[RMDB]
Chemical mapping of a 207-nucleotide RNA with 2A3 and DMS.
Values cover nucleotides 27 to 156.
The RNA was probed in 150 mM KOAc, 10 mM MgCl2 and 150 mM bicine (pH 8.5) at 24 C.
RNA sequence: GGGAACGACUCGAGUAGAGUCGAAAAUGGUCAUUCGUGACCACUGACCCGUAGGUAGUACUACCCACCUACGAUGCUCGAUGAAAGGCUUUCGAAAGAGAGCCUGGAGAGCUAAGUAGAGGUACUACCUAAACGGCACGCUGGACUUCGGUCCAAACAAAAAUCGUCUUUUCGAAGACGAUUUUUGAAAAGAAACAACAACAACAAC
Reactivity to 2A3 in 0.01 (KOAc 150mM, MgCl2 10mM, bicine 150mM(pH8.5), 24C), signal-to-noise 4, nucleotides 027 to 156: u080g010g000u010c010a020u090u060c230g120u070g000a010c020c020a030c090u090g100a110c000c000c030g010u010a010g000g010u010a000g000u000a000c010u090a110c020c050c030a070c020c000u010a000c000g000a020u220g000c000u000c040g300a300u000g010a000a000a000g010g000c000u000u000u000c020g030a030a070a030g000a010g010a010g000c040c000u000g000g010a010g000a000g000c000u010a090a010g000u000a000g000a000g020g000u000a000c000u000a000c000c000u000a010a020a000c000g040g010c090a030c150g130c130u080g000g020a000c010u030u080c260g090g010u000c000c060a000a050a000
Reactivity to DMS in 0.01 (KOAc 150mM, MgCl2 10mM, bicine 150mM(pH8.5), 24C), signal-to-noise 2, nucleotides 027 to 156: u000g000g030u000c000a050u000u010c210g050u050g010a020c000c010a040c050u000g010a200c020c000c010g010u000a000g010g000u000a000g030u000a020c000u000a030c010c000c010a300c190c000u000a010c010g030a300u000g030c000u010c000g010a150u000g020a150a190a100g010g020c000u000u010u000c000g000a240a160a300g010a050g000a010g030c000c000u010g060g000a300g000a010g000c000u000a120a300g010u000a050g000a130g000g000u000a030c000u020a000c000c000u000a000a060a070c070g040g020c070a050c110g010c100u010g000g000a110c070u010u010c190g050g000u000c030c030a070a070a130